[RMDB]
RNA sequence: GGGAACGACUCGAGUAGAGUCGAAAACAACUGUUAUCUUGCCACUGCAUUGUUAACACUCCAACAAAUAGAGUUGAAGUUAAAUCCACCUGCUCUACAAAGGGCUGGUGAAGCUGCUAACUUUUGUCAUCGAUAAGUAGUUCGCUACUUAUCGAUGAAAAGAAACAACAACAACAAC
Reactivity to DMS in 0.01 (KOAc 150mM, MgCl2 10mM, bicine 150mM(pH8.5), 24C), signal-to-noise 2, nucleotides 027 to 126: c060a080a080c200u000g000u000u010a080u010c020u000u000g040c010c070a040c120u000g030c020a030u000u030g030u000u000a010a050c080a060c060u010c000c030a030a050c030a080a110a130u020a100g000a100g000u000u020g000a040a030g010u010u010a030a080a080u000c020c020a010c000c020u000g020c000u000c000u010a080c300a130a110a090g000g010g040c000u000g000g010u000g000a020a070g010c070u000g000c070u010a020a020c030u000u020u000u000g000u000
Reactivity to 2A3 in 0.01 (KOAc 150mM, MgCl2 10mM, bicine 150mM(pH8.5), 24C), signal-to-noise 2, nucleotides 027 to 126: c020a060a010c060u080g000u080u050a090u100c070u080u110g010c000c090a110c070u140g000c020a020u060u010g040u030u080a000a040c000a000c060u080c030c040a000a040c010a070a170a090u210a040g080a000g050u000u110g080a010a040g000u000u080a020a060a050u060c030c000a000c000c010u010g020c000u030c000u050a140c060a100a190a050g000g010g000c000u020g000g000u010g010a000a010g000c010u040g040c030u030a030a030c000u080u020u040u150g130u080